[RMDB]
Conditions: 150 mM KOAc, 10 mM MgCl2 and 150 mM bicine (pH 8.5), 24 C.
An RNA of 207 nucleotides, treated with 2A3 and read out base by base.
Reactivities are given for positions 27 through 156.
It was measured as part of the RMDB library OK3TST.
For 2A3, 1,020 sequencing reads were counted.

RNA sequence: GGGAACGACUCGAGUAGAGUCGAAAAGUCAUGCGCCGGCCUGCUCUCCGAACUCCCCGGCUACUCGUGGGAUCCGAAGGCGACCGCGCGCGGCGAGGACGCCCCCAUGAAGGUCGACGACCACAGCGUCGACGCACUCAGGUACGCCGUGCACUCCAUCUUACUUCAGGUUCGCCUGAAGUAAGAUAAAAGAAACAACAACAACAAC
Reactivity to 2A3 in 0.01 (KOAc 150mM, MgCl2 10mM, bicine 150mM(pH8.5), 24C), signal-to-noise 2, nucleotides 027 to 156: g040u010c030a070u130g000c010g000c110c000g060g020c000c070u180g050c040u050c000u010c080c020g020a040a020c070u040c040c010c000c000g050g040c130u180a100c120u150c100g060u220g010g000g030a070u050c050c030g000a020a010g010g000c020g000a020c010c000g040c000g000c010g000c010g060g000c000g010a060g090g040a040c030g030c030c000c020c000c000a040u070g090a090a000g140g000u010c000g000a000c000g030a090c050c040a170c110a090g070c040g010u000c000g000a000c000g020c010a060c010u070c040a000g020g040u040a030c090g000c010c000g030u030g070c070a030c020u020c050c000